RNA sequence: GGGAACGACUCGAGUAGAGUCGAAAACGCGUCCUGUUCGCAGGACGCGAAUUAAGGUAACCUUCCUGGUGGCGAGAAUAAAUGAGCACUCGCGCUCAUAAAAUAGGUGGGCGUUCGCGCCCACCAACCAGGUAUCAUAGUUCGCUAUGAUACCUGGAAAAGAAACAACAACAACAAC
Reactivity to DMS in 0.01 (KOAc 150mM, MgCl2 10mM, bicine 150mM(pH8.5), 24C), signal-to-noise 3, nucleotides 027 to 126: c030g040c020g010u000c000c020u000g000u000u010c170g020c010a030g020g010a010c020g020c000g000a010a030u000u000a100a060g000g000u010a070a140c050c050u000u000c010c020u000g000g020u010g000g000c010g020a090g030a120a120u000a040a100a070u010g000a040g020c010a130c120u000c140g000c130g000c010u000c020a050u000a060a030a100a090u000a070g020g030u000g010g000g020c000g030u000u010c190g010c010g010c000c000c000a020c020c000a010a030
Reactivity to 2A3 in 0.01 (KOAc 150mM, MgCl2 10mM, bicine 150mM(pH8.5), 24C), signal-to-noise 3, nucleotides 027 to 126: c010g020c010g000u000c010c000u010g030u060u060c270g020c040a000g000g010a000c000g010c000g020a010a000u100u050a070a030g050g000u030a050a070c000c020u050u030c010c020u050g080g020u100g090g030c050g030a030g050a140a130u150a170a140a100u130g020a020g020c020a020c060u050c050g050c070g000c030u000c030a040u150a060a130a020a060u210a080g000g010u000g000g000g000c040g000u030u030c210g020c000g000c020c010c000a000c000c010a010a000

Conditions: 150 mM KOAc, 10 mM MgCl2 and 150 mM bicine (pH 8.5), 24 C.
An RNA of 177 nucleotides, treated with DMS and 2A3 and read out base by base.
Values cover nucleotides 27 to 126.